[RMDB]
RNA sequence: GGGAACGACUCGAGUAGAGUCGAAAAUCUCAUGGUCCAGAUAUUGGUGCAUUAUCUACUGCAACUGAACGAAUAGCUUGGGAUAUUCGUCAAGCUUUAAUGGAUUCAUGAAAAUUAUUUAAGAGAGACGAUACUAUGAGUUCGCUCAUAGUAUCGUAAAAGAAACAACAACAACAAC
Reactivity to 2A3 in 0.01 (KOAc 150mM, MgCl2 10mM, bicine 150mM(pH8.5), 24C), signal-to-noise 5, nucleotides 027 to 126: u030c010u000c000a000u010g010g000u000c000c000a010g060a100u100a070u190u090g060g000u030g000c010a040u050u110a160u200c100u140a090c070u030g000c020a120a070c060u050g040a080a030c030g010a080a040u040a060g010c020u050u060g090g010g090a060u050a130u170u110c060g050u010c030a020a030g010c000u010u040u080a030a030u040g000g010a010u160u210c010a000u030g000a030a030a020a020u120u090a080u040u160u170a130a050g060a000g010a000g020
Reactivity to DMS in 0.01 (KOAc 150mM, MgCl2 10mM, bicine 150mM(pH8.5), 24C), signal-to-noise 5, nucleotides 027 to 126: u000c080u000c000a020u000g010g010u010c010c010a030g020a170u000a080u010u000g010g010u000g030c010a040u000u000a120u020c180u000a160c260u000g020c000a060a150c070u000g000a130a070c100g010a050a040u000a010g010c020u010u010g020g000g020a140u000a080u010u010c030g010u010c050a040a070g010c060u000u000u000a050a140u000g000g000a020u010u010c000a020u000g000a020a060a080a080u000u000a100u010u000u010a070a110g010a170g000a150g000

Description:
This 177-nucleotide RNA was probed chemically with 2A3 and DMS.